[RMDB]
RNA sequence: GGGAACGACUCGAGUAGAGUCGAAAACAGUUUCUGCUAACACACAUGAGUUGCCAUGAGAUAGUGUGGAAGGACAUCCAAAACAUUGAUGGGUUGAAGUAUGUGAAAACACUGGUUGAGAAAUCAAUGAAAGAUCCCUUUUCGAAGGGAUCUUUCAAAAAGAAACAACAACAACAAC
Reactivity to DMS in 0.01 (KOAc 150mM, MgCl2 10mM, bicine 150mM(pH8.5), 24C), signal-to-noise 2, nucleotides 027 to 126: c120a100g000u010u020u000c000u000g000c040u000a090a150c160a060c070a080c060a070u030g000a160g000u000u010g000c030c000a040u000g010a120g020a040u010a020g040u010g090u000g000g020a080a050g000g000a100c110a020u010c010c070a080a060a060a070c100a090u040u000g000a060u000g000g000g010u010u010g010a070a150g000u000a050u030g000u000g000a060a090a100a060c050a100c060u000g000g010u000u000g030a070g000a090a010a030u020c030a040a150
Reactivity to 2A3 in 0.01 (KOAc 150mM, MgCl2 10mM, bicine 150mM(pH8.5), 24C), signal-to-noise 2, nucleotides 027 to 126: c130a020g000u000u000u000c010u010g040c140u100a080a000c010a000c000a000c030a200u090g050a030g130u080u010g100c010c060a080u210g000a000g000a030u150a140g080u170g000u000g000g120a060a050g050g060a050c000a010u020c020c010a060a000a060a020c010a050u080u090g020a080u060g010g020g000u080u130g040a030a000g060u060a100u120g060u080g060a100a000a050a000c100a000c060u080g000g000u030u040g030a040g000a080a050a000u050c030a050a050
This 177-nucleotide RNA was probed chemically with DMS and 2A3.
The DMS profile rests on 2,724 reads.
Source: RMDB library OK1LIB, as collected in RNAgym.
The reactions ran in a buffer of 150 mM KOAc, 10 mM MgCl2 and 150 mM bicine (pH 8.5), at 24 C.
2A3 adducts were read by reverse transcription with SuperScript II with manganese.